[RMDB]
Source: RMDB library OK3TST, as collected in RNAgym.
This 207-nucleotide RNA was probed chemically with 2A3.
For 2A3 the reverse transcriptase was SuperScript II with manganese.

RNA sequence: GGGAACGACUCGAGUAGAGUCGAAAAAGUAUGCUCCACCAUCUAGAGGCCAUGGAUACCGUGAUUAUGGUCAUUCUCGUCGACAUGAAAGUUAUUCUAGAGGAUAUAGUUAUCAUGAUGGCUACGGUGAGGCCCUUGGUAGAGAUCAUUCUGAACACCCCACUAUUUACUUCGGUAAAUAGUGGGGAAAAGAAACAACAACAACAAC
Reactivity to 2A3 in 0.01 (KOAc 150mM, MgCl2 10mM, bicine 150mM(pH8.5), 24C), signal-to-noise 2, nucleotides 027 to 156: a010g080u070a040u100g050c000u030c000c000a000c010c000a060u070c060u090a080g050a260g100g000c010c010a060u120g130g030a130u090a130c010c010g010u030g030a040u050u000a040u090g010g010u000c040a020u070u010c010u010c000g230u060c050g030a050c020a070u170g110a080a000a130g040u150u080a100u180u080c080u080a040g020a030g020g040a000u070a000u070a230g110u140u050a020u040c020a020u030g000a010u030g060g040c030u080a000c020g000g000u020g050a130g000g000c000c000c000u010u000g010g010u020a020g000a000g030a010u200c010a020u150u000c020u060g020a060a010c020a060
Conditions: 150 mM KOAc, 10 mM MgCl2 and 150 mM bicine (pH 8.5), 24 C.